[RMDB]
RNA sequence: GGGAACGACUCGAGUAGAGUCGAAAACUUACUGUUAAUCAGUUGUAGUGCCGCUUUACUAGCAUACUGUCAGUUAAUGCCAGAGUUUCAACUAGCCAAACUAAUGAAAGCGAACUGACUUCGCACCGGAUUUUACAAGUUUCGACUUGUAAAAUCCAAAAGAAACAACAACAACAAC
Reactivity to 2A3 in 0.01 (KOAc 150mM, MgCl2 10mM, bicine 150mM(pH8.5), 24C), signal-to-noise 1, nucleotides 027 to 126: c040u040u080a040c010u000g030u040u240a190a080u120c010a000g020u030u080g150u230a100g010u000g120c000c000g100c000u060u090u130a230c150u060a060g090c020a050u030a110c060u020g030u060c000a040g040u000u120a090a090u200g040c000c020a060g070a030g040u070u090u070c100a120a070c030u060a020g070c080c010a000a060a100c090u090a130a000u130g120a060a190a070g030c000g010a030a010c060u020g030a070c000u060u060c100g000c010a020c060c040
Reactivity to DMS in 0.01 (KOAc 150mM, MgCl2 10mM, bicine 150mM(pH8.5), 24C), signal-to-noise 2, nucleotides 027 to 126: c050u000u010a030c040u000g020u000u000a120a100u000c030a040g000u000u000g020u000a010g010u000g020c070c130g010c030u000u000u010a060c150u020a060g000c050a070u010a140c130u000g010u000c030a010g010u000u010a070a050u000g000c030c070a080g020a080g010u000u010u020c060a070a080c140u010a050g020c100c100a070a120a040c080u000a060a080u020g020a080a150a120g010c020g000a030a040c050u000g020a060c070u000u010c090g010c090a110c260c160

The record gives the reactivity of an RNA of 177 nucleotides to 2A3 and DMS.
For 2A3, 658 sequencing reads were counted.
The data come from the RNA Mapping Database (RMDB), library OK2TRN.